Chemical mapping of a 207-nucleotide RNA with DMS and 2A3. For 2A3, 2,817 sequencing reads were counted. The RNA was probed in 150 mM KOAc, 10 mM MgCl2 and 150 mM bicine (pH 8.5) at 24 C. High 2A3 reactivity points to a flexible backbone, as in loops and unpaired stretches. It was measured as part of the RMDB library M2RFPK.
RNA sequence: GGGAACGACUCGAGUAGAGUCGAAAAGAGCCACAUACCUACCCAAGGUGAAAGCUCCUUCUCUCGCAAUGUGUAACUCAUGAUUCUCAUGACCCCUGGUUGGCGAGAUCCGGACUAGGAGCCAGGGAAAGCCGCUGCCGAUUCGUCGGCAGCGGAAGAUAUUGGGUUGAUUCGUCAACCCAAUAUCAAAAGAAACAACAACAACAAC
Reactivity to DMS in 0.01 (KOAc 150mM, MgCl2 10mM, bicine 150mM(pH8.5), 24C), signal-to-noise 2, nucleotides 027 to 156: g020a050g040c040c010a020c070a080u000a040c000c000u010a060c070c030c050a080a040g000g030u000g010a110a160a210g000c060u000c000c020u000u000c030u020c000u000c010g040c040a300a060u000g040u000g030u010a080a050c050u000c000a120u010g010a220u000u000c030u000c010a300u000g000a160c070c020c000c000u000g020g020u010u000g020g010c010g010a060g010a060u000c080c100g020g010a110c040u000a020g000g000a160g000c010c000a010g010g010g000a030a030a180g020c020c010g020c000u000g060c020c010g020a130u000u010c250g000u010c000g020g010c000a010g000c000g020g010a000a020
Reactivity to 2A3 in 0.01 (KOAc 150mM, MgCl2 10mM, bicine 150mM(pH8.5), 24C), signal-to-noise 3, nucleotides 027 to 156: g010a000g050c080c010a020c020a030u080a050c000c000u010a020c000c000c030a010a020g010g010u070g070a230a130a090g090c090u120c000c000u040u030c020u000c000u010c000g010c020a030a050u020g000u010g030u090a090a060c000u000c020a040u110g130a180u160u020c030u010c030a070u200g150a180c000c000c000c000u010g010g000u020u040g070g010c010g010a010g010a030u070c090c050g000g030a030c030u020a010g000g010a000g000c000c010a010g000g000g000a060a020a020g040c000c000g000c010u000g000c000c000g030a030u050u060c170g000u010c000g120g000c000a000g000c000g000g000a000a000